[RMDB]
Chemical mapping of a 177-nucleotide RNA with DMS and 2A3. Reactivities are rounded to 0.1 and cut off at 0 and 3. Source: RMDB library OK2TRN, as collected in RNAgym. The 2A3 profile rests on 1,173 reads.
RNA sequence: GGGAACGACUCGAGUAGAGUCGAAAAGUUUCCAAACCAAGGCACAGAUGCACAAACCCAUGGUCACUCAUGGUGGUGGUGGUGGUGGGGUAUUUCUAAAAUGCCUGUUGCAGAGGAAGCCAUAGGCGACGAGUCAACACUUCGGUGUUGACUCGUCAAAAGAAACAACAACAACAAC
Reactivity to DMS in 0.01 (KOAc 150mM, MgCl2 10mM, bicine 150mM(pH8.5), 24C), signal-to-noise 1, nucleotides 027 to 126: g010u000u030u000c000c000a150a060a130c110c040a060a040g000g040c040a170c100a030g010a180u010g000c070a030c110a040a100a080c040c000c000a070u010g000g010u000c120a080c160u020c050a040u020g000g000u000g020g000u000g020g010u020g010g020u000g000g000u000g020g000g010g000u000a020u030u000u000c120u000a000a040a050a030u010g000c000c040u010g010u000u000g020c040a020g000a210g000g000a070a120g000c020c010a010u010a090g010g000c140
Reactivity to 2A3 in 0.01 (KOAc 150mM, MgCl2 10mM, bicine 150mM(pH8.5), 24C), signal-to-noise 1, nucleotides 027 to 126: g000u000u020u000c000c000a000a000a010c020c030a030a020g080g000c030a040c000a100g100a080u050g000c060a030c050a130a160a070c040c000c030a020u040g070g040u030c020a030c070u180c020a100u090g070g040u060g010g010u080g020g090u070g040g040u080g010g020u080g000g010g000g000u050a080u030u130u000c080u050a090a090a040a080u170g000c000c000u050g050u030u040g000c040a000g060a010g100g050a050a010g020c020c000a060u140a060g020g040c000